Structure probing data (DMS and 2A3) for a 177-nucleotide construct. DMS adducts were read by reverse transcription with MarathonRT.
RNA sequence: GGGAACGACUCGAGUAGAGUCGAAAAGCAGGCGCGCAUCACCGAAGUGUUACCGCCCACGCAUUCCCGCGCGCGCCCAUUCGGCACGCCCUCCUCCUCGACCCGCGCCAAAUGAAAGACCCCGCGCCAGAUAGAGUAAGUUCGCUUACUCUAUCUGAAAAGAAACAACAACAACAAC
Reactivity to DMS in 0.01 (KOAc 150mM, MgCl2 10mM, bicine 150mM(pH8.5), 24C), signal-to-noise 5, nucleotides 027 to 126: g010c070a090g010g000c020g020c100g000c040a100u010c070a070c070c140g010a090a120g010u010g010u000u000a070c090c030g000c010c020c040a090c170g010c060a150u000u000c000c000c010g020c150g020c020g010c050g010c020c020c070a100u000u010c080g010g000c040a040c100g000c030c030c020u000c020c010u000c020c020u000c030g000a090c040c020c030g020c030g000c010c050a040a070a090u010g010a050a090a140g000a180c030c010c010c030g010c100g010c100
Reactivity to 2A3 in 0.01 (KOAc 150mM, MgCl2 10mM, bicine 150mM(pH8.5), 24C), signal-to-noise 3, nucleotides 027 to 126: g010c020a030g000g020c020g010c010g000c060a030u060c020a060c030c060g100a220a050g020u050g040u100u090a050c020c030g000c020c000c020a070c070g010c010a030u030u050c000c000c020g010c040g000c000g000c000g000c020c010c000a120u160u160c030g010g050c030a010c040g020c010c000c010u010c000c010u010c010c010u030c000g050a060c010c020c010g010c010g000c020c020a080a160a050u130g030a030a100a050g060a070c000c000c000c010g010c010g010c030

Values cover nucleotides 27 to 126. For 2A3, 5,086 sequencing reads were counted.